Chemical mapping of a 207-nucleotide RNA with 2A3.
The reactions ran in a buffer of 150 mM KOAc, 10 mM MgCl2 and 150 mM bicine (pH 8.5), at 24 C.
For 2A3, 782 sequencing reads were counted.
It was measured as part of the RMDB library OK3TST.
Reactivities are given for positions 27 through 156.
[RMDB]
RNA sequence: GGGAACGACUCGAGUAGAGUCGAAAAGAACCAAGACUCCAUCUUGGAGUACAUUUUAAAAGGAGAUGUCAGUCGGCCACUGCUAAUGGACUGGCAUCGACACCUAACCUGAGACCCAUUUGCCAACGUCCGGUAGGAUCAUAGUUCCUGCAGGGCAGGAUUAUGGAUCCUUCGGGAUCCAUAAUCCAAAAGAAACAACAACAACAAC
Reactivity to 2A3 in 0.01 (KOAc 150mM, MgCl2 10mM, bicine 150mM(pH8.5), 24C), signal-to-noise 2, nucleotides 027 to 156: g040a030a070c050c020a020a020g060a050c000u000c000c000a130u080c220u150u120g000g030a000g000u040a060c000a020u130u120u170u240a060a110a080a030g040g010a060g010a010u000g000u020c000a000g000u040c050g080g050c020c140a150c100u240g120c130u110a160a200u190g070g010a000c000u010g000g000c010a010u000c000g000a000c000a070c000c000u020a040a030c000c010u020g060a030g040a110c030c000c020a010u120u130u190g110c020c050a130a030c070g000u000c010c000g020g000u010a010g000g000a010u030c020a150u060a060g110u060u010c000c000u000g030c020a010g000g010g000c030a030